[RMDB]
RNA sequence: GGGAACGACUCGAGUAGAGUCGAAAAUCUUUUUUCUGCUGAAGCUCAGAUGCCUUGCAGGAAGCCCAAAGUUCUCUCCUCCCUGCACCCCCGUUGCUGCUCCCCUCAAAAGGGCCUCUUAUCCCUUGACCACUUAAAUUUUCGAAUUUAAGUGGUCAAAAGAAACAACAACAACAAC
Reactivity to DMS in 0.01 (KOAc 150mM, MgCl2 10mM, bicine 150mM(pH8.5), 24C), signal-to-noise 2, nucleotides 027 to 126: u020c010u000u000u000u000u000u000c000u000g020c040u000g000a050a120g040c010u020c110a100g010a150u020g010c020c040u000u000g020c060a040g000g000a020a090g020c030c010c040a030a070a130g010u020u010c010u000c020u000c020c010u000c010c010c020u000g010c070a140c030c030c020c020c040g000u020u010g030c020u020g000c050u000c000c020c010c020u000c080a020a040a100a060g000g000g000c080c040u000c050u010u010a130u000c010c020c010u020u010
Reactivity to 2A3 in 0.01 (KOAc 150mM, MgCl2 10mM, bicine 150mM(pH8.5), 24C), signal-to-noise 3, nucleotides 027 to 126: u020c000u050u150u050u010u020u010c030u020g050c010u080g040a080a010g030c000u040c120a090g020a160u160g030c000c000u050u110g040c020a010g000g050a030a020g030c020c020c000a040a050a020g040u080u010c020u000c010u000c030c000u020c010c000c000u010g000c030a050c000c010c010c020c010g050u040u040g020c000u000g010c000u030c000c000c010c000u060c020a040a050a020a020g000g000g000c020c000u050c020u030u080a080u060c000c000c000u000u010
Chemical mapping of a 177-nucleotide RNA with DMS and 2A3. The RNA was probed in 150 mM KOAc, 10 mM MgCl2 and 150 mM bicine (pH 8.5) at 24 C.